[RMDB]
RNA sequence: GGGAACGACUCGAGUAGAGUCGAAAAGCGUCCGUGACAGAGUGCGUGCGGCGGGGCGCGCCGGUUAUGCGUCGCUGAUCGGGUACGCGCGGGCCACCUUCCUAGUGGCAUUGACCGAUGCGGCCGGUCGAGGCCCAGGGUUCGCCCUGGGCCUCGAAAAAGAAACAACAACAACAAC
Reactivity to 2A3 in 0.01 (KOAc 150mM, MgCl2 10mM, bicine 150mM(pH8.5), 24C), signal-to-noise 1, nucleotides 027 to 126: g040c020g000u000c000c040g050u050g000a000c000a000g300a030g080u090g010c010g000u030g000c040g000g000c000g010g010g030g000c000g000c000g000c000c010g000g050u100u050a100u160g080c150g070u050c040g010c040u020g000a070u160c060g080g000g070u100a120c040g010c030g010c000g030g050g000c020c000a000c000c020u060u140c020c000u000a050g000u010g050g000c060a100u070u160g050a060c010c000g000a010u090g020c000g000g000c000c000g020g000